Structure probing data (2A3) for a 177-nucleotide construct. 2A3 is a SHAPE reagent: it acylates the 2'-hydroxyl of flexible nucleotides of all four kinds.

RNA sequence: GGGAACGACUCGAGUAGAGUCGAAAAGUGGUCGCAGGCAAGAGCCCAUAUCGACCCUGCGGCUUGCUACUUCGAUGUCGGUUCUUUCCAUCCUGGGUGUGCAGCAGCACCCAAGGGUGGGGUUGUUCCGACUUAUCACUUUCGAGUGAUAAGUCGGAAAAGAAACAACAACAACAAC
Reactivity to 2A3 in 0.01 (KOAc 150mM, MgCl2 10mM, bicine 150mM(pH8.5), 24C), signal-to-noise 1, nucleotides 027 to 126: g170u110g000g020u040c020g010c000a000g030g000c010a120a000g050a020g150c050c000c050a140u200a070u020c020g030a010c010c000c010u000g000c000g000g000c000u000u040g090c000u020a020c020u080u190c050g000a040u240g060u000c000g090g000u010u000c010u040u020u020c000c000a020u000c000c000u000g000g000g010u000g000u020g020c160a210g030c020a000g000c000a070c000c000c000a010a020g020g020g000u000g000g000g000g000u000u040g010u000u030
The reactions ran in a buffer of 150 mM KOAc, 10 mM MgCl2 and 150 mM bicine (pH 8.5), at 24 C. It was measured as part of the RMDB library RFM100.